[RMDB]
RNA sequence: GGGAACGACUCGAGUAGAGUCGAAAAUCAUCAAGAAGUAGGCUUAGGCCAAUUGCUUGGUGGUGAAAGUAGAGGGAAGGUAGCACUUCGACGCCUCUAAGUACGCUGUGGGGGUAGUGCUUAAAUCAAAAGCACAGCGACUUCGGUCGCUGUGCAAUCAUCCAGCUCUGUUCGCAGAGCUGGAUGAAAAAGAAACAACAACAACAAC
Reactivity to 2A3 in 0.01 (KOAc 150mM, MgCl2 10mM, bicine 150mM(pH8.5), 24C), signal-to-noise 1, nucleotides 027 to 156: u010c010a010u020c020a000a050g000a060a070g000u040a080g050g010c030u120u110a070g180g040c010c010a010a130u070u040g020c020u000u000g000g000u010g000g000u020g050a090a010a050g130u230a030g010a050g000g020g050a080a030g000g010u060a030g010c050a000c060u080u000c070g040a030c070g070c010c010u040c000u010a030a010g020u030a030c070g000c170u060g030u170g030g000g000g000g000u010a000g030u020g000c010u060u100a060a060a120u160c050a010a000a120a000g000c000a000c000a000g030c000g040a010c000u080u140c270g060g000u000c000g000c000u000g000u000g020c000a000a000
The data come from the RNA Mapping Database (RMDB), library M2RFPK.
Structure probing data (2A3) for a 207-nucleotide construct.
Conditions: 150 mM KOAc, 10 mM MgCl2 and 150 mM bicine (pH 8.5), 24 C.